RNA sequence: GGGAACGACUCGAGUAGAGUCGAAAAGGCGGUGGAUUUCCACAAUGUCAUUGAUGAGCUGACGGUUUCCGAGACCGGCGAUAAUCUGGAAACGUAGAAUGGGCGCCAGCGAAUUUCCGCGUUCAAACUGCUUUUAAUGAUUCGUCAUUAAAAGCAGAAAAGAAACAACAACAACAAC
Reactivity to 2A3 in 0.01 (KOAc 150mM, MgCl2 10mM, bicine 150mM(pH8.5), 24C), signal-to-noise 4, nucleotides 027 to 126: g050g010c050g010g030u040g040g020a160u080u050u070c030c010a020c030a050a100u150g020u050c030a060u010u150g050a110u070g020a060g020c050u020g050a030c000g060g000u020u040u010c040c010g000a030g010a050c010c020g040g020c020g050a080u080a200a070u070c050u090g040g000a070a020a010c010g000u020a040g070a140a040u050g040g030g030c040g000c010c010a010g020c030g050a030a030u030u050u020c030c010g030c050g040u020u050c050a050a090a040
Reactivity to DMS in 0.01 (KOAc 150mM, MgCl2 10mM, bicine 150mM(pH8.5), 24C), signal-to-noise 6, nucleotides 027 to 126: g010g020c030g010g020u000g010g010a290u010u010u010c020c010a080c110a080a090u000g020u000c050a110u000u000g010a090u000g010a190g020c060u000g010a070c050g010g010u000u000u000c040c020g010a080g010a160c070c030g000g000c050g000a080u010a070a100u000c040u010g020g010a030a050a050c040g010u000a080g000a100a090u010g010g010g010c040g000c030c060a040g010c040g010a080a110u000u000u000c030c030g010c110g020u010u000c090a050a110a190